[RMDB]
RNA sequence: GGGAACGACUCGAGUAGAGUCGAAAAUACGGACGUUCGCGUCCGUAAAAAAGAUAUGGAACCAUAAAGAGUGUGGACAUGCGAGCGUCUCGGAAACGAGACGUUUCGCAACAGCCACAUGGUUCCUAAGUCAAAAAACGAAGAUUCGUCUUCGUAAGGGUAAUGUAUGAUUCGUCAUACAUUACCCAAAAGAAACAACAACAACAAC
Reactivity to 2A3 in 0.01 (KOAc 150mM, MgCl2 10mM, bicine 150mM(pH8.5), 24C), signal-to-noise 3, nucleotides 027 to 156: u080a010c000g000g010a000c010g020u050u030c270g020c000g090u000c010c000g000u000a000a000a000a000a000a010g000a000u010a000u020g000g000a000a020c000c000a000u060a040a080a010g050a030g020u020g000u000g010g010a040c160a300u300g000c010g000a000g000c000g000u000c000u000c000g010g000a000a000a000c000g000a010g000a010c000g000u000u070u000c010g000c000a020a010c010a010g000c000c000a000c000a000u000g000g000u000u000c000c000u000a000a000g000u000c000a000a000a010a120a000a070c000g070a000a080g000a010u050u100c160g070u010c130u000u000c000g020u060a040a210
Reactivity to DMS in 0.01 (KOAc 150mM, MgCl2 10mM, bicine 150mM(pH8.5), 24C), signal-to-noise 1, nucleotides 027 to 156: u000a040c010g000g020a020c010g020u000u000c300g070c080g000u000c000c000g010u000a010a010a030a100a010a070g010a040u000a030u000g000g020a000a000c000c010a000u000a190a170a050g010a200g010u000g000u000g000g010a040c030a160u000g020c010g000a010g000c000g000u000c000u020c030g030g000a010a010a020c010g030a020g000a000c000g010u000u000u000c000g030c020a060a020c110a210g000c000c010a030c040a030u000g040g000u000u010c000c010u000a000a080g000u000c000a010a050a030a100a070a050c000g010a100a020g020a080u000u000c250g010u000c010u000u010c000g030u000a090a220
Structure probing data (2A3 and DMS) for a 207-nucleotide construct. Conditions: 150 mM KOAc, 10 mM MgCl2 and 150 mM bicine (pH 8.5), 24 C. The data come from the RNA Mapping Database (RMDB), library RNAMAK.